[RMDB]
RNA sequence: GGGAACGACUCGAGUAGAGUCGAAAAGAUAUGGAACACCGUAAUCAGGAGGUCCUUUUGACGCGUAUCUUCUCGGAAACGAGAAGUAAGCGCGAUAAGGACGCCUGAUUACGGUGUUCCUAAGUCAGUUAAGACGUAGGUUCGCCUACGUCUUAACAAAAGAAACAACAACAACAAC
Reactivity to DMS in 0.01 (KOAc 150mM, MgCl2 10mM, bicine 150mM(pH8.5), 24C), signal-to-noise 2, nucleotides 027 to 126: g000a050u000a300u000g000g000a010a020c010a010c000c000g000u010a000a000u010c000a000g010g010a110g030g010u000c000c000u010u000u000u010g010a200c030g010c010g020u000a260u000c000u000u000c000u010c000g010g010a120a130a240c000g000a010g010a030a000g000u010a060a210g010c020g020c020g020a010u000a000a010g020g000a020c010g000c000c000u000g000a010u000u000a000c000g030g000u000g010u000u000c000c010u000a010a070g000u000c060a120